[RMDB]
RNA sequence: GGGAACGACUCGAGUAGAGUCGAAAAGUAGGCGGUAACAGGCGCGGAUCAGUACCGCCAGGGCGCUACGACCGGUGCGUUGCACGUAGCGUCGCGACAGAACUGCGUUUGCCGAUACGGGCGGGGGGAGUCGAAAUACUUUCGAGUAUUUCGACUCAAAAGAAACAACAACAACAAC
Reactivity to 2A3 in 0.01 (KOAc 150mM, MgCl2 10mM, bicine 150mM(pH8.5), 24C), signal-to-noise 2, nucleotides 027 to 126: g210u150a060g020g020c030g000g030u080a110a030c060a090g010g000c000g000c040g050g000a070u090c070a020g050u000a000c020c010g030c000c000a000g000g000g040c010g000c000u000a010c000g070a140c070c080g000g090u160g050c170g120u130u300g030c130a040c060g020u020a000g010c010g000u010c010g010c000g070a070c010a020g080a140a020c000u070g000c040g040u020u020u100g030c010c010g000a010u060a140c030g020g040g010c000g010g000g000g000g000
Reactivity to DMS in 0.01 (KOAc 150mM, MgCl2 10mM, bicine 150mM(pH8.5), 24C), signal-to-noise 2, nucleotides 027 to 126: g020u000a100g010g020c010g020g010u000a080a090c140a140g020g010c040g000c040g000g040a050u010c050a100g010u000a020c010c010g010c020c150a030g000g010g020c000g000c020u000a020c010g000a100c100c040g000g010u000g020c050g010u000u000g040c070a120c000g000u010a000g020c030g020u000c020g010c030g010a100c140a090g020a070a130c030u010g010c010g020u000u000u000g010c000c000g020a150u000a090c130g010g000g040c020g000g000g010g010g000
The record gives the reactivity of an RNA of 177 nucleotides to 2A3 and DMS. Values cover nucleotides 27 to 126. For 2A3, 1,563 sequencing reads were counted. For DMS the reverse transcriptase was MarathonRT. The data come from the RNA Mapping Database (RMDB), library OK2TST. The reactions ran in a buffer of 150 mM KOAc, 10 mM MgCl2 and 150 mM bicine (pH 8.5), at 24 C.